[RMDB]
RNA sequence: GGGAACGACUCGAGUAGAGUCGAAAACUGGAUUCUUUCGAGAAUCCAGCAUGUCUUGUCGCUAGCGAACGAUCAACGCUAGCGACUAGACUUUAUUGAUCGCAUUUGCCUCUUUCGAGAGGCAAAAUGCCAAUCAAUUGUUCGCAAUUGAUUGGCAAAAAGAAACAACAACAACAAC
Reactivity to DMS in 0.01 (KOAc 150mM, MgCl2 10mM, bicine 150mM(pH8.5), 24C), signal-to-noise 6, nucleotides 027 to 126: c010u000g000g000a010u000u000c000u000u000u020c160g010a030g010a010a010u000c000c000a010g020c080a070u000g010u000c010u000u000g010u000c000g010c000u010a010g010c000g000a060a090c120g020a060u010c080a130a060c000g000c000u000a000g000c010g000a000c000u000a010g010a040c070u010u000u010a070u010u000g010a050u010c090g020c300a160u000u000u000g000c000c000u000c000u000u000u020c190g000a020g010a010g010g000c000a000a000a010a050
Reactivity to 2A3 in 0.01 (KOAc 150mM, MgCl2 10mM, bicine 150mM(pH8.5), 24C), signal-to-noise 3, nucleotides 027 to 126: c000u000g000g000a000u000u000c000u030u130u120c170g080a010g000a010a000u000c000c000a000g020c020a050u070g000u010c020u010u000g010u000c000g000c000u000a000g000c020g060a090a050c060g090a150u140c040a030a040c000g010c000u010a000g020c000g000a000c000u000a000g000a000c000u020u080u020a110u010u100g090a060u110c090g010c100a050u000u000u040g000c010c010u000c030u050u080u100c260g110a020g000a010g010g010c000a000a000a010a000

The data come from the RNA Mapping Database (RMDB), library M2PK50. Chemical mapping of a 177-nucleotide RNA with DMS and 2A3. The RNA was probed in 150 mM KOAc, 10 mM MgCl2 and 150 mM bicine (pH 8.5) at 24 C. For DMS the reverse transcriptase was MarathonRT.